The record gives the reactivity of an RNA of 177 nucleotides to 2A3 and DMS.
The RNA was probed in 150 mM KOAc, 10 mM MgCl2 and 150 mM bicine (pH 8.5) at 24 C.
The 2A3 profile rests on 1,433 reads.
Values are in units of 0.01, from 0 to 300, in steps of 10.
2A3 adducts were read by reverse transcription with SuperScript II with manganese.
RNA sequence: GGGAACGACUCGAGUAGAGUCGAAAAUGAGAAGUCGUCAGUAGUUCGACGUGAGCAGAAGCCCGCCUCGAUAUGCUAUGUGGACGAGGGCUUGCCCAAGACACACCUUAACCCUAGCGGGACGCAAACUUAUGUGGCGAUUCGUCGCCACAUAAGUAAAAGAAACAACAACAACAAC
Reactivity to 2A3 in 0.01 (KOAc 150mM, MgCl2 10mM, bicine 150mM(pH8.5), 24C), signal-to-noise 2, nucleotides 027 to 126: u220g010a050g030a140a000g060u060c020g030u000c020a040g090u100a010g050u090u100c040g010a010c040g050u040g000a030g000c030a010g030a300a000g040c000c000c000g020c020c020u050c030g020a030u000a030u240g040c040u050a030u160g300u060g090g060a110c030g000a060g010g000g000c020u020u060g030c000c000c000a010a010g030a000c020a000c010a030c010c030u050u080a080a130c010c000c000u030a020g030c010g040g000g030a000c020g020c020a090a080
Reactivity to DMS in 0.01 (KOAc 150mM, MgCl2 10mM, bicine 150mM(pH8.5), 24C), signal-to-noise 2, nucleotides 027 to 126: u020g000a080g010a080a090g010u020c010g000u010c020a070g010u010a090g000u010u000c000g010a000c090g020u000g000a090g010c030a060g000a150a240g010c000c010c020g040c010c020u000c070g000a070u000a030u000g020c040u000a120u010g010u000g000g010a110c030g000a290g020g020g020c020u030u000g020c010c010c010a070a140g000a070c060a020c030a060c090c040u000u000a040a100c020c020c020u010a110g000c050g000g020g000a110c140g000c090a080a080
Source: RMDB library M2PK90, as collected in RNAgym. The DMS profile rests on 1,390 reads.